[RMDB]
RNA sequence: GGGAACGACUCGAGUAGAGUCGAAAAGAUAUGGAUCAGAUACUGGAGCUGGUUUCGGAAACGAAACUCAGCGUUGAAAGUAUUCUGAUCCUAAGUCAAAAGCCAUUGCAGUUCGCUGCAAUGGCAACCAGGUAAUUAACUUCGGUUAAUUACCUGGAAAAGAAACAACAACAACAAC
Reactivity to DMS in 0.01 (KOAc 150mM, MgCl2 10mM, bicine 150mM(pH8.5), 24C), signal-to-noise 3, nucleotides 027 to 126: g020a030u000a300u010g000g010a010u000c000a000g000a020u000a010c010u010g020g000a120g030c000u000g010g010u000u000u000c000g000g010a100a110a170c000g000a000a010a000c000u030c010a010g020c000g020u000u010g010a110a110a030g010u000a000u010u000c010u000g020a010u000c000c000u000a010a070g000u000c030a150a070a110a110g030c000c000a010u000u000g010c010a020g000u010u010c260g010c000u000g020c000a010a000u000g000g000c010a000a000
Reactivity to 2A3 in 0.01 (KOAc 150mM, MgCl2 10mM, bicine 150mM(pH8.5), 24C), signal-to-noise 3, nucleotides 027 to 126: g040a020u060a010u120g000g010a000u010c010a000g010a000u020a040c040u190g250g220a090g000c010u010g010g030u010u000u000c000g000g000a050a020a040c020g010a030a000a010c300u300c170a000g000c000g000u040u030g050a090a070a000g000u000a020u250u080c010u000g000a000u000c000c000u000a000a010g010u000c020a150a000a000a140g010c010c000a000u000u000g030c000a000g010u080u190c260g160c180u000g010c000a000a000u010g000g040c000a000a000